Source: RMDB library OK3TST, as collected in RNAgym. This 207-nucleotide RNA was probed chemically with DMS and 2A3. For DMS the reverse transcriptase was MarathonRT. The 2A3 profile rests on 2,673 reads. The reactions ran in a buffer of 150 mM KOAc, 10 mM MgCl2 and 150 mM bicine (pH 8.5), at 24 C.

RNA sequence: GGGAACGACUCGAGUAGAGUCGAAAAACGUCGAGUACAACAAAAUCGGCAUGAUCAAGCGGAUCAAGCCGGGCGCGCUGCUCGGCGGCGAUCUGUUCAAGGCGUCGCCGCUCGAAUGGCUCGAAAAGGUGCUGCUGCCGCAGAUGGCGAAGAAGGGGCACACUUAGAUUUUCGAAUCUAAGUGUGCAAAAGAAACAACAACAACAAC
Reactivity to DMS in 0.01 (KOAc 150mM, MgCl2 10mM, bicine 150mM(pH8.5), 24C), signal-to-noise 1, nucleotides 027 to 156: a070c040g010u000c030g010a090g010u000a100c060a060a170c060a100a080a070a080u000c020g000g020c020a100u000g010a070u000c030a110a190g060c100g000g030a090u000c000a060a190g040c000c000g010g010g030c000g070c180g030c100u000g000c010u000c010g010g020c000g000g050c060g000a010u000c020u000g000u000u010c270a150a070g010g040c070g030u000c010g010c000c030g020c050u040c030g020a050a100u000g000g020c000u000c030g000a090a090a150a140g030g010u000g000c000u000g010c040u000g010c020c020g030c020a140g020a180u000g000g000c040g000a020a100g010a110a130g000g010g010
Reactivity to 2A3 in 0.01 (KOAc 150mM, MgCl2 10mM, bicine 150mM(pH8.5), 24C), signal-to-noise 3, nucleotides 027 to 156: a000c030g050u040c040g020a020g050u080a100c040a160a000c020a010a170a030a130u110c020g000g020c010a050u030g020a020u030c080a120a100g120c080g180g000a010u030c010a050a000g000c010c000g000g030g000c040g000c020g000c040u050g010c000u010c020g000g000c000g000g000c000g010a010u020c020u060g080u200u120c120a110a030g070g020c030g020u020c010g000c000c000g010c020u070c030g030a070a050u070g050g000c020u000c050g020a050a010a050a020g050g020u050g000c030u000g010c000u040g000c030c000g000c020a010g020a160u100g050g000c030g030a050a030g060a040a020g070g020g030
2A3 adducts were read by reverse transcription with SuperScript II with manganese. Values are in units of 0.01, from 0 to 300, in steps of 10.